[RMDB]
RNA sequence: GGGAACGACUCGAGUAGAGUCGAAAAGGAUUUGUGGGAUCAUUGAUAUGGUGGAUAUUGUUUUUCUAUUUGCUCAUGGGGCCACAGCUCCAAUACAGACAGCUGCAAAUUGCUAGGGCAAAAUUACAUGGAGGACUAUAUUCGUAUAGUCCUCCAUAAAAGAAACAACAACAACAAC
Reactivity to DMS in 0.01 (KOAc 150mM, MgCl2 10mM, bicine 150mM(pH8.5), 24C), signal-to-noise 5, nucleotides 027 to 126: g010g020a090u000u000u000g020u000g010g010g000a070u000c050a060u000u000g020a100u010a090u000g010g030u000g010g010a080u000a060u000u010g010u000u000u000u000u000c030u010a100u000u000u010g010c110u000c040a120u000g010g010g000g000c010c150a050c150a090g010c050u000c020c020a060a100u010a090c130a100g000a090c130a040g010c040u000g000c100a030a070a090u000u010g000c030u000a090g010g000g010c050a030a030a040a070u010u010a060c220
Reactivity to 2A3 in 0.01 (KOAc 150mM, MgCl2 10mM, bicine 150mM(pH8.5), 24C), signal-to-noise 3, nucleotides 027 to 126: g040g000a040u070u090u180g060u090g000g000g030a030u040c020a030u070u110g040a040u080a030u180g030g030u030g020g040a010u020a090u110u110g100u060u100u010u020u000c040u020a150u060u050u020g010c000u000c060a060u060g000g000g050g010c010c010a110c010a040g000c010u000c000c000a030a020u130a070c000a030g110a030c040a070g020c010u040g000c040a050a070a150u100u070g030c000u030a010g040g010g000c000a010a000a070a040u110u080a060c030